[RMDB]
The record gives the reactivity of an RNA of 207 nucleotides to 2A3 and DMS.
Conditions: 150 mM KOAc, 10 mM MgCl2 and 150 mM bicine (pH 8.5), 24 C.
For 2A3 the reverse transcriptase was SuperScript II with manganese.
RNA sequence: GGGAACGACUCGAGUAGAGUCGAAAAGGAAUUGGAAGGUCAUCCUUCACAGGAUCGUGUGGAAGUCCUGCUCGGGGCGGAAGCAUUAAAACCAUUCGAGCUAGUCAAUGCGUGGCGUGUCCCUCCGGUGUUUCUCUGGACUUCGGUCCAGAGAAAACACAAUGCGUUGCUUCGGCAACGCAUUGUGAAAAGAAACAACAACAACAAC
Reactivity to 2A3 in 0.01 (KOAc 150mM, MgCl2 10mM, bicine 150mM(pH8.5), 24C), signal-to-noise 2, nucleotides 027 to 156: g020g020a030a080u100u100g010g010a070a040g040g040u190c050a100u200c020c020u050u060c050a070c010a060g010g020a040u090c030g040u020g000u030g060g020a040a000g020u010c020c000u020g040c130u100c110g010g010g020g000c020g000g020a030a000g020c020a000u020u170a030a050a010a110c040c000a010u040u080c050g030a020g040c070u060a010g110u050c060a050a070u060g080c040g040u010g030g000c030g000u080g070u060c010c010c010u070c080c050g080g010u080g030u060u030u010c000u000c000u000g000g000a000c000u050u030c180g040g010u000c000c000a010g000a000g000a000a000a000a000
Reactivity to DMS in 0.01 (KOAc 150mM, MgCl2 10mM, bicine 150mM(pH8.5), 24C), signal-to-noise 2, nucleotides 027 to 156: g020g010a080a080u000u000g010g030a110a030g050g000u000c070a130u010c040c000u000u020c090a170c020a070g040g000a100u000c080g000u020g000u000g000g010a220a190g010u000c000c010u000g010c130u000c100g020g010g020g020c010g040g000a250a110g030c050a130u010u000a040a080a140a140c050c030a120u000u000c050g010a080g020c050u000a130g030u010c060a050a020u000g020c030g000u010g030g030c060g030u000g010u000c000c000c010u000c030c000g030g030u000g000u000u010u010c000u000c000u010g000g010a030c000u020u010c300g080g010u000c000c000a030g010a000g000a000a000a020a110